[RMDB]
RNA sequence: GGGAACGACUCGAGUAGAGUCGAAAAAGAGUGUGUAGAGGUUAGAGUAGUCUGUUGGAUUCAGCCCUGUCCUUCUACCAUGUAGGUUCUGGGGACAACUUAGGUCAUCAGGCUUGGCAGUAAGUGCUAAUGUUUCGAGUUUCGACUCGAAACAUUAAAAAGAAACAACAACAACAAC
Reactivity to 2A3 in 0.01 (KOAc 150mM, MgCl2 10mM, bicine 150mM(pH8.5), 24C), signal-to-noise 2, nucleotides 027 to 126: a000g090a030g020u040g000u000g020u040a040g010a040g070g050u060u090a010g010a020g060u100a020g030u040c040u030g090u040u080g070g020a100u050u070c030a000g010c000c000c040u020g020u040c000c000u080u100c030u070a120c000c070a060u260g090u150a050g000g050u110u030c060u130g010g000g000g060a030c020a060a070c060u070u160a020g060g060u010c000a050u030c010a040g030g000c000u030u050g030g000c010a020g020u140a130a030g060u070g090c020
Reactivity to DMS in 0.01 (KOAc 150mM, MgCl2 10mM, bicine 150mM(pH8.5), 24C), signal-to-noise 4, nucleotides 027 to 126: a050g000a080g020u000g000u000g010u010a040g010a080g010g010u010u010a050g000a080g010u000a040g020u010c030u010g010u020u010g010g000a130u000u010c140a110g010c050c050c030u000g010u000c020c000u000u000c060u000a060c060c090a100u010g010u010a080g000g000u000u010c080u000g010g010g000g000a040c060a040a070c140u000u010a070g000g000u000c010a030u000c050a050g000g000c030u000u000g010g000c020a040g000u010a040a050g000u000g000c130